[RMDB]
RNA sequence: GGGAACGACUCGAGUAGAGUCGAAAAAUGAACGUGGUGGGCGUAAGUUAGUAGAAGAUCUAAUGGUACGCGGUGGGUUUUCGACUGUACUCGAAACCACCACCACCACCAAGUGGUUCCCACCGAAACCUUGUGAAACAUUCGUGUUUCACAAGGUAAAAGAAACAACAACAACAAC
Reactivity to DMS in 0.01 (KOAc 150mM, MgCl2 10mM, bicine 150mM(pH8.5), 24C), signal-to-noise 4, nucleotides 027 to 126: a040u020g010a080a090c230g010u000g000g020u000g000g000g020c010g010u010a110a280g020u000u000a000g010u000a070g000a150a110g000a110u020c000u000a010a030u000g010g020u000a010c010g020c060g050g020u000g010g010g010u000u010u000u000c010g010a030c160u010g010u020a070c270u000c000g000a010a020a040c020c000a020c000c030a300c020c020a050c000c020a010c010c030a030a130g000u000g000g000u000u000c000c010c000a120c170c120g000a090a090
Reactivity to 2A3 in 0.01 (KOAc 150mM, MgCl2 10mM, bicine 150mM(pH8.5), 24C), signal-to-noise 4, nucleotides 027 to 126: a010u080g000a000a000c010g020u020g000g000u010g010g060g020c010g010u010a020a020g000u010u010a010g010u020a040g080a300a040g020a080u010c000u000a010a010u050g260g040u050a010c000g010c000g000g010u030g010g020g030u050u060u050u030c010g000a010c060u190g090u300a090c050u010c010g000a000a010a000c000c010a000c010c010a010c010c000a000c000c000a000c000c000a010a030g010u020g000g030u010u000c010c000c010a010c020c030g090a120a050